[RMDB]
RNA sequence: GGGAACGACUCGAGUAGAGUCGAAAACGUUAAGCACUUUAUUGUCGAUGGGGCUGCAACGCCUUGAUCGGCGGCGAUUAGUCAGUUAGUUACAGCCUGCCCACGCUGUUGUGCGCGCCGAAGCUGAGGAGUCUUAACCUUUCGAGGUUAAGACUCCAAAAGAAACAACAACAACAAC
Reactivity to DMS in 0.01 (KOAc 150mM, MgCl2 10mM, bicine 150mM(pH8.5), 24C), signal-to-noise 1, nucleotides 027 to 126: c120g000u000u010a040a120g030c040a050c060u000u000u000a080u020u000g020u000c040g040a050u010g000g000g000g030c000u000g000c260a070a110c160g080c000c000u000u000g000a010u010c020g020g000c000g030g040c050g000a190u000u010a070g000u010c070a080g030u000u000a110g030u000u000a000c010a060g000c020c020u000g030c050c010c010a080c200g020c000u020g000u000u000g000u000g000c050g030c010g010c080c060g010a020a100g040c070u000g000a300